[RMDB]
RNA sequence: GGGAACGACUCGAGUAGAGUCGAAAAAGCCUCCGUACGCGGAGGCAAGGUUUGCCAUGAUGAGAUGCAUGUUCAGUCCGUGUUUCAGCUGAUGACCCUGAUUAAACACAUGCUCUGAGCAGACUAACUUUUAACCCGCAUUCGUGCGGGUUAAAAGAAAAGAAACAACAACAACAAC
Reactivity to 2A3 in 0.01 (KOAc 150mM, MgCl2 10mM, bicine 150mM(pH8.5), 24C), signal-to-noise 3, nucleotides 027 to 126: a000g020c000c000u000c010c000g040u010a030c300g000c020g150g000a000g000g010c000a000a000g000g000u020u000u030g060c020c020a070u190g040a040u160g100a060g000a070u120g020c000a010u020g000u050u030c060a050g020u000c000c050g000u000g020u030u030u020c030a090g000c070u120g030a090u130g020a090c000c000c000u010g020a070u010u260a050a060a000c110a010c000a050u040g030c000u020c030u020g050a030g000c010a000g000a010c010u010a060a070
Reactivity to DMS in 0.01 (KOAc 150mM, MgCl2 10mM, bicine 150mM(pH8.5), 24C), signal-to-noise 2, nucleotides 027 to 126: a110g020c000c000u020c000c000g020u000a080c180g020c010g020g000a040g060g010c000a020a010g020g000u000u000u010g020c010c050a080u100g010a130u010g000a030g000a090u000g000c080a070u000g010u000u000c120a050g000u020c000c060g030u000g000u030u020u020c040a220g010c140u040g000a100u000g000a040c100c000c000u000g000a080u000u000a060a080a070c140a010c040a010u010g030c030u000c000u000g010a140g020c000a000g010a020c060u060a050a110